Overview
This 207-nucleotide RNA was probed chemically with 2A3 and DMS. For 2A3, 1,143 sequencing reads were counted. For DMS, 4,607 sequencing reads were counted. Reactivities are given for positions 27 through 156. For 2A3 the reverse transcriptase was SuperScript II with manganese.

[RMDB]
RNA sequence: GGGAACGACUCGAGUAGAGUCGAAAACACCUUUCGGACCCCUCAGCUCUUGGUCCGUAAGUGGUUAAACUCGAAUGGAAGGGUUUAAUGAGGUGUACCACUCUUUAAUGUCUUCGUCUGUACAUCCAAGGGCGCCCGUUCCAGAGGGUAUUAAGGGCUAGAUAUUUAGUUUCGACUGAGUGUCUAGAAAAGAAACAACAACAACAAC
Reactivity to 2A3 in 0.01 (KOAc 150mM, MgCl2 10mM, bicine 150mM(pH8.5), 24C), signal-to-noise 1, nucleotides 027 to 156: c030a020c020c030u010u020u020c040g040g000a040c000c000c030c000u090c080a030g020c030u000c000u050u070g000g000u020c000c010g030u010a000a030g050u050g050g040u060u090a050a030a000c010u050c050g040a170a030u040g020g050a000a040g050g020g000u020u060u090a050a050u040g020a010g040g010u010g000u010a020c020c020a010c030u020c020u040u070u030a090a070u060g040u030c020u030u000c010g030u000c010u030g020u010a000c010a030u010c000c030a040a040g030g030g000c010g000c000c000c010g110u040u050c000c010a040g020a040g000g000g020u010a080u120u080a050a030g030g000g000
Reactivity to DMS in 0.01 (KOAc 150mM, MgCl2 10mM, bicine 150mM(pH8.5), 24C), signal-to-noise 2, nucleotides 027 to 156: c020a070c010c000u000u000u000c010g010g000a050c000c000c140c040u000c070a200g020c010u000c020u010u010g020g000u000c020c030g040u000a020a040g020u010g020g020u000u000a050a060a050c040u000c010g020a170a010u010g020g020a150a220g010g010g010u000u000u000a070a100u010g000a100g040g000u010g020u000a040c030c070a050c040u000c010u010u010u000a060a080u000g010u000c060u010u000c080g030u000c070u000g030u000a050c010a030u000c020c040a110a140g020g010g020c160g040c010c010c010g000u000u010c050c010a140g000a300g000g010g000u000a060u010u000a040a080g000g030g010